[RMDB]
RNA sequence: GGGAACGACUCGAGUAGAGUCGAAAAGAUAUGGAGAGGACAGGGAGCCAGUCCGUCGGAAACGACGGAGUUGGCGAAGAACUGUCUCCCCACCUCCUAAGUCAAAACGGAUACUUCGGUAUCCGAAGUAGGUACAUAACUUCGGUUAUGUACCUACAAAAGAAACAACAACAACAAC
Reactivity to 2A3 in 0.01 (KOAc 150mM, MgCl2 10mM, bicine 150mM(pH8.5), 24C), signal-to-noise 3, nucleotides 027 to 126: g010a000u020a020u070g000g010a030g010a050g000g040a000c000a000g010g010g000a000g000c000c000a010g050u000c000c000g010u010c010g000g010a020a000a010c000g010a000c010g010g010a010g150u080u020g000g000c020g030a180a040g000a000a000c000u010g000u000c010u070c020c000c010c010a270c020c010u020c000c000u010a020a000g010u010c020a020a020a120a140c020g000g000a000u010a010c000u030u090c260g110g000u000a010u000c000c010g000a050a020
Reactivity to DMS in 0.01 (KOAc 150mM, MgCl2 10mM, bicine 150mM(pH8.5), 24C), signal-to-noise 5, nucleotides 027 to 126: g010a030u000a020u000g000g000a020g010a140g010g000a020c000a010g000g000g010a040g030c000c000a010g000u000c000c000g020u000c000g010g000a020a010a050c000g010a020c000g010g000a020g010u010u000g030g010c000g000a060a110g000a100a210c000u000g000u000c000u000c010c020c020c020a180c210c010u000c000c010u000a010a110g010u000c030a070a040a090a210c030g010g000a010u000a010c000u000u010c170g030g010u000a010u000c000c000g010a020a050